The data come from the RNA Mapping Database (RMDB), library OK2TST.
The record gives the reactivity of an RNA of 177 nucleotides to 2A3 and DMS.
For 2A3, 3,801 sequencing reads were counted.
DMS adducts were read by reverse transcription with MarathonRT.
Values cover nucleotides 27 to 126.
The RNA was probed in 150 mM KOAc, 10 mM MgCl2 and 150 mM bicine (pH 8.5) at 24 C.

RNA sequence: GGGAACGACUCGAGUAGAGUCGAAAAUGAUAUUACCGCAACCGUGGACUCCAUCCCGCUGAUCACCGCCUCUAUUCUGGCGAAGAAACUUGCGGAAGGUCUGGACGCGCUGGUGAUGGACGUGAAACUCCCUUUUACCAUUCGUGGUAAAAGGGAGAAAAGAAACAACAACAACAAC
Reactivity to 2A3 in 0.01 (KOAc 150mM, MgCl2 10mM, bicine 150mM(pH8.5), 24C), signal-to-noise 3, nucleotides 027 to 126: u100g020a010u020a000u090u050a030c010c020g000c010a050a010c000c000g020u020g000g030a030c010u030c090c020a110u090c010c020c000g010c030u000g030a030u020c010a010c060c030g010c020c000u100c010u140a300u300u090c080u100g000g020c000g000a040a020g020a020a130a030c090u100u110g000c000g000g000a010a020g030g010u000c020u030g050g020a020c000g080c020g000c050u090g010g020u010g010a010u020g000g050a010c050g040u090g060a090a040a030
Reactivity to DMS in 0.01 (KOAc 150mM, MgCl2 10mM, bicine 150mM(pH8.5), 24C), signal-to-noise 5, nucleotides 027 to 126: u010g020a270u010a040u000u010a050c020c010g010c020a030a090c300c030g030u000g000g000a050c030u000c050c110a200u010c050c000c010g010c010u010g000a140u000c030a080c170c000g010c010c020u010c160u000a170u010u010c130u000g010g020c010g020a050a120g010a070a060a070c130u010u000g000c020g000g010a080a070g000g010u010c020u000g000g020a040c040g010c100g020c030u010g040g000u000g000a030u000g010g010a150c170g000u010g010a100a080a140